[RMDB]
RNA sequence: GGGAACGACUCGAGUAGAGUCGAAAAAUGUUCUUCUCGGGCGUGACGAAGAUGACGGUUUCGGGGAUGGGGUCGAGCAUGUUGCAGGAGAGGAGGGCGCGCAGGAGGUGGCUCUUGCCGGAGCCGGUAAUGCCUGUAGAUUCGUCUACAGGCAUUAAAAAGAAACAACAACAACAAC
Reactivity to DMS in 0.01 (KOAc 150mM, MgCl2 10mM, bicine 150mM(pH8.5), 24C), signal-to-noise 3, nucleotides 027 to 126: a080u010g010u000u010c010u000u000c020u010c020g010g000g020c040g030u010g000a170c080g010a080a080g020a080u000g000a100c080g000g000u000u000u010c060g010g010g000g010a120u000g000g010g010g020u010c090g010a130g010c050a070u010g010u010u010g010c050a100g000g020a130g000a140g010g000a070g000g000g000c100g030c120g010c050a050g010g010a070g020g030u010g020g020c010u000c020u000u000g020c130c060g020g000a040g020c020c010g010g020
Reactivity to 2A3 in 0.01 (KOAc 150mM, MgCl2 10mM, bicine 150mM(pH8.5), 24C), signal-to-noise 1, nucleotides 027 to 126: a000u100g010u010u000c000u040u000c000u010c040g030g000g010c020g080u080g000a020c030g070a030a010g060a100u140g020a020c050g000g010u020u020u200c060g000g020g010g060a100u110g040g000g000g030u100c060g020a030g030c100a040u140g050u160u100g060c040a040g060g040a060g030a040g050g060a100g010g000g000c010g000c000g000c030a040g010g050a040g000g090u160g040g060c000u010c010u050u050g000c000c000g000g000a000g010c000c000g000g010